[RMDB]
RNA sequence: GGGAACGACUCGAGUAGAGUCGAAAAAUGAUCCCGGGUAGCGGGGUCGGGGUGACGCGGUUCCGCCCAAAGGUCCACGUCACCCUGUGGAGCUAGCUACUUCGACUUGAAAGGCUCGGCGCGCCGGGCACUUUACACGCUUCGGCGUGUAAAGUGCAAAAGAAACAACAACAACAAC
Reactivity to DMS in 0.01 (KOAc 150mM, MgCl2 10mM, bicine 150mM(pH8.5), 24C), signal-to-noise 1, nucleotides 027 to 126: a090u010g010a020u000c000c010c020g020g000g000u000a040g050c000g000g000g000g030u000c000g000g000g010g010u010g010a000c000g010c070g000g000u030u010c010c000g030c150c130c130a050a150a250g010g010u000c000c000a030c030g000u000c000a000c000c010c000u000g000u080g000g050a110g000c020u020a090g020c030u040a060c030u000u010c050g020a060c060u000u010g000a080a210a100g000g000c050u000c010g000g010c040g000c110g000c020c020g020g000
Reactivity to 2A3 in 0.01 (KOAc 150mM, MgCl2 10mM, bicine 150mM(pH8.5), 24C), signal-to-noise 3, nucleotides 027 to 126: a020u160g010a040u040c020c000c000g000g020g000u080a040g040c030g020g060g000g030u030c000g000g010g000g000u000g020a010c000g020c010g000g020u260u080c050c010g130c060c000c010a120a260a050g000g000u000c000c000a020c000g000u000c010a000c000c000c000u020g040u050g020g000a020g030c050u050a020g010c010u040a050c000u030u120c030g050a040c020u030u110g090a070a070a040g030g010c010u000c010g050g010c070g000c040g020c020c030g000g030